[RMDB]
RNA sequence: GGGAACGACUCGAGUAGAGUCGAAAAGAUAUGGACUGGUAAGAUCGAUAAGACGGUAUCGGAAACGAUACGCGUCUUUUGACGAUUAUCCAGUCCUAAGUCAAAUCCUAAUGUUCGCAUUAGGAAACUGGUUUAGAGUGUUCGCACUCUAAACCAGAAAAGAAACAACAACAACAAC
Reactivity to 2A3 in 0.01 (KOAc 150mM, MgCl2 10mM, bicine 150mM(pH8.5), 24C), signal-to-noise 1, nucleotides 027 to 126: g000a000u020a020u040g010g010a020c020u040g120g000u150a300a230g150a220u040c040g110a120u110a280a020g000a000c010g010g000u010a000u000c000g000g000a010a000a020c000g000a000u000a000c040g020c010g000u000c000u000u010u020u060g010a020c000g000a000u010u010a030u010c000c000a010g010u000c000c000u000a000a000g020u000c010a020a020a140u050c020c000u050a020a030u020g030u070u180c300g000c180a000u000u000a020g000g000a090a090a140
Reactivity to DMS in 0.01 (KOAc 150mM, MgCl2 10mM, bicine 150mM(pH8.5), 24C), signal-to-noise 2, nucleotides 027 to 126: g010a020u000a180u000g000g000a020c000u010g000g000u010a160a210g030a010u000c000g030a220u020a020a010g010a010c000g000g020u000a000u000c000g030g010a050a040a090c010g040a020u000a000c000g020c000g010u000c000u000u000u020u030g000a250c150g020a010u000u000a170u000c000c000a000g000u000c000c000u010a000a050g010u000c030a190a130a180u010c000c000u000a000a000u000g000u000u010c240g060c020a030u000u000a010g000g000a020a130a100